Chemical mapping of a 177-nucleotide RNA with DMS. Source: RMDB library RFMREP, as collected in RNAgym. In probing experiments dimethyl sulfate is read out at A N1 and C N3, which are open when not base-paired. Conditions: 150 mM KOAc, 10 mM MgCl2 and 150 mM bicine (pH 8.5), 24 C.

[RMDB]
RNA sequence: GGGAACGACUCGAGUAGAGUCGAAAAUGCCUGCGGUUUAGCAGACCGCAGGUCGCAGUGACUAGGGGGGAGCGACUGUUUACUAAAAACACAGGGGGCUGCAAUCCGGCAACGGUUUGUACAGCCCGUUUCAUCUAUCCUUCGGGAUAGAUGAAACAAAAGAAACAACAACAACAAC
Reactivity to DMS in 0.01 (KOAc 150mM, MgCl2 10mM, bicine 150mM(pH8.5), 24C), signal-to-noise 2, nucleotides 027 to 126: u010g010c000c020u010g010c010g010g000u020u000u000a150g010c140a270g000a000c000c010g030c000a010g010g020u000c170g020c050a070g000u010g010a130c050u010a120g040g000g060g020g050g000a090g010c030g010a060c070u000g000u000u020u000a090c160u010a100a060a090a060a040c170a100c160a100g040g010g010g000g010c010u010g000c020a010a010u010c000c010g020g010c300a060a150c020g010g000u000u000u000g010u000a080c050a050g050c010c010c010